RNA sequence: GGGAACGACUCGAGUAGAGUCGAAAAGAUUUACGAGAGUAAAUCGCAUUUGGAAACAAAUGUAAGGUGGAAUUACGACGCUAACGCCCUACAUUGGUAUCGAACCCAAUGUAGAUAAGUGCUAGUAGAUGGCAGACUACUAGACACAUGCGUUGAACAGGACUAAUUUAUUCGUAAAUUAGUCCUGAAAAGAAACAACAACAACAAC
Reactivity to DMS in 0.01 (KOAc 150mM, MgCl2 10mM, bicine 150mM(pH8.5), 24C), signal-to-noise 5, nucleotides 027 to 156: g020a050u000u000u000a000c000g030a300g020a300g020u000a000a010a010u000c010g010c020a020u000u000u000g000g010a300a170a210c010a000a010a020u000g040u000a110a110g020g010u000g000g010a140a160u000u000a070c000g000a010c010g030c000u000a090a170c060g000c030c100c000u000a000c000a010u000u010g010g020u010a300u000c070g000a220a120c160c000c000a020a030u000g030u000a010g000a030u010a020a070g040u010g010c020u010a010g000u000a000g030a100u000g030g030c110a110g000a230c010u000a010c010u000a020g010a130c000a000c010a090u000g010c030g020u000u000g010a060a180
Reactivity to 2A3 in 0.01 (KOAc 150mM, MgCl2 10mM, bicine 150mM(pH8.5), 24C), signal-to-noise 9, nucleotides 027 to 156: g000a000u010u000u000a010c010g010a010g000a000g090u000a000a010a000u010c010g000c000a000u000u000u000g020g020a040a030a020c010a010a000a000u030g010u060a050a060g030g020u040g020g070a090a080u150u080a160c060g010a000c000g020c020u020a080a010c020g010c010c000c000u010a000c000a000u000u010g010g020u070a090u260c100g040a040a050c010c000c000a000a000u000g000u000a000g010a010u080a090a050g000u000g000c000u000a000g000u000a010g010a070u080g080g060c030a030g020a070c000u000a000c000u000a000g160a040c000a000c000a020u110g000c000g000u000u020g020a030a010